[RMDB]
RNA sequence: GGGAACGACUCGAGUAGAGUCGAAAAGGUACGUCAAGCUCGAGAACCCUGAGCGAAGCUAUGGACCUAGCCGUCAAGUACGAGGUUACGCACUUUGUCGACGAAGUCUGAGACCGUCAAGCUCGUCAUAGGCAAGGUACUUCGGUACCUUGCCUAUAAAAGAAACAACAACAACAAC
Reactivity to DMS in 0.01 (KOAc 150mM, MgCl2 10mM, bicine 150mM(pH8.5), 24C), signal-to-noise 2, nucleotides 027 to 126: g020g040u000a030c040g010u020c090a180a290g000c030u010c020g010a060g040a120a210c060c020c050u000g010a060g000c020g000a100a090g000c000u020a140u000g000g000a050c020c030u000a280g040c020c000g000u000c030a110a110g000u000a050c020g020a190g030g000u010u010a200c030g030c060a050c020u000u000u000g040u000c070g000a030c040g000a060a250g020u000c020u000g000a110g010a050c120c080g010u020c090a000a160g010c010u000c010g000u000c090
Reactivity to 2A3 in 0.01 (KOAc 150mM, MgCl2 10mM, bicine 150mM(pH8.5), 24C), signal-to-noise 1, nucleotides 027 to 126: g140g000u240a030c000g030u000c050a150a040g000c000u020c000g000a020g030a120a080c010c010c050u080g030a010g000c010g030a080a000g000c030u060a130u300g010g000a000c000c000u000a000g080c010c010g000u000c010a020a000g020u010a060c030g040a120g120g150u300u090a130c150g030c010a000c020u020u100u160g050u000c030g000a010c030g000a000a000g000u000c000u020g050a000g000a080c080c060g040u030c020a000a000g020c010u000c000g020u000c020
Background:
Conditions: 150 mM KOAc, 10 mM MgCl2 and 150 mM bicine (pH 8.5), 24 C. Chemical mapping of a 177-nucleotide RNA with DMS and 2A3. 2A3 is a SHAPE reagent: it acylates the 2'-hydroxyl of flexible nucleotides of all four kinds. The DMS profile rests on 982 reads. DMS adducts were read by reverse transcription with MarathonRT. The data come from the RNA Mapping Database (RMDB), library OK2TRN. For 2A3, 804 sequencing reads were counted. For 2A3 the reverse transcriptase was SuperScript II with manganese.